[RMDB]
RNA sequence: GGGAACGACUCGAGUAGAGUCGAAAAUGCACAGGAGAAGGCACGCAAGCCAGACUGGCUGAAGCGGACCGUGCCGGGCGGGGACAAGUACACAGAGAUCAAGGCAAAGCUGCGUGAGCUCAAGCUGCCUGGCAGCUCAUUUCGAUGAGCUGCCAGGAAAAGAAACAACAACAACAAC
Reactivity to DMS in 0.01 (KOAc 150mM, MgCl2 10mM, bicine 150mM(pH8.5), 24C), signal-to-noise 1, nucleotides 027 to 126: u040g020c030a010c090a080g100g000a130g000a130a050g000g030c090a030c030g020c130a200a120g000c000c030a070g040a250c140u010g030g050c010u020g000a030a160g030c070g000g040a070c220c060g010u000g070c030c000g030g000g010c180g000g020g000g020a060c220a060a110g000u000a020c130a020c080a080g030a110g010a070u000c050a050a090g040g000c020a020a070a090g000c020u000g040c040g010u000g000a040g010c010u000c000a080a050g020c190u000g000